[RMDB]
An RNA of 177 nucleotides, treated with DMS and 2A3 and read out base by base.
For 2A3 the reverse transcriptase was SuperScript II with manganese.
Conditions: 150 mM KOAc, 10 mM MgCl2 and 150 mM bicine (pH 8.5), 24 C.
It was measured as part of the RMDB library OK2TST.
The DMS profile rests on 1,800 reads.

RNA sequence: GGGAACGACUCGAGUAGAGUCGAAAACAGACCCAGACUCAUCCUGGAGGCCAUGGAGGAACACCUCCCUCCUUUCUACAAGGACAACCUCGUCUACGUCUCAGGUCCUUCCCACGCGGAAGAAGUGCACUGGAGAGUCAUUCGUGACUCUCCAGUGAAAAGAAACAACAACAACAAC
Reactivity to DMS in 0.01 (KOAc 150mM, MgCl2 10mM, bicine 150mM(pH8.5), 24C), signal-to-noise 3, nucleotides 027 to 126: c220a130g020a120c020c020c070a100g020a060c070u010c070a050u000c070c040u000g000g010a050g000g000c050c040a120u000g000g030a040g000g010a130a170c240a090c060c010u000c030c010c040u010c010c040u000u000u030c140u000a080c180a050a050g000g000a080c300a050a050c010c020u000c010g000u010c020u010a110c150g020u020c020u000c090a060g000g030u000c030c030u000u000c000c000c030a190c200g000c060g020g000a080a050g000a050a090g010u000g010
Reactivity to 2A3 in 0.01 (KOAc 150mM, MgCl2 10mM, bicine 150mM(pH8.5), 24C), signal-to-noise 2, nucleotides 027 to 126: c000a030g160a070c000c000c000a000g050a070c040u030c030a120u010c030c040u020g150g000a000g010g030c000c030a090u140g010g000a000g000g040a160a080c090a240c110c020u030c000c000c000u000c000c000u020u050u020c080u110a090c030a040a030g000g010a010c030a060a060c010c050u040c040g060u020c030u040a020c060g040u010c010u010c020a030g000g040u030c000c000u000u020c000c000c000a090c070g070c120g040g040a040a040g040a030a020g130u100g010